[RMDB]
An RNA of 177 nucleotides, treated with DMS and 2A3 and read out base by base.
It was measured as part of the RMDB library TTRDEL.
The DMS profile rests on 1,011 reads.
RNA sequence: GGGAACGACUCGAGUAGAGUCGAAAAGAUAUGGACCGGGUCUUUUGACGGCUUCGUUUCGGAAACGAAAUUCGGCCGAUAAGACCGUCCUAAGUCAAACGCCUUGGUACUUCGGUACCAAGGCGAACAGACCAUCAAACUUCGGUUUGAUGGUCUGAAAAGAAACAACAACAACAAC
Reactivity to DMS in 0.01 (KOAc 150mM, MgCl2 10mM, bicine 150mM(pH8.5), 24C), signal-to-noise 1, nucleotides 027 to 126: g010a090u010a300u040g000g000a010c020c140g040g000g010u000c000u000u000u020u000g010a280c130g010g000c010u000u000c170g010u000u000u000c010g010g000a050a050a180c010g000a000a020a020u000u010c180g020g000c000c000g040a050u020a000a000g000a020c000c000g000u000c000c000u010a020a070g020u000c040a110a080a180c020g000c010c000u010u010g010g010u000a000c000u010u040c140g010g000u000a010c000c000a000a000g010g050c000g000a020a030
Reactivity to 2A3 in 0.01 (KOAc 150mM, MgCl2 10mM, bicine 150mM(pH8.5), 24C), signal-to-noise 1, nucleotides 027 to 126: g010a020u060a030u200g000g030a020c110c280g300g070g000u060c080u120u150u130u270g230a190c080g000g010c000u020u030c030g000u000u010u020c000g000g040a070a060a030c000g010a010a010a010u050u030c000g020g000c030c010g000a000u020a000a000g000a000c000c000g000u000c000c000u050a160a020g010u020c030a240a080a000c050g000c000c000u000u000g000g010u000a000c000u000u120c300g140g010u000a000c030c010a000a040g010g000c000g000a010a000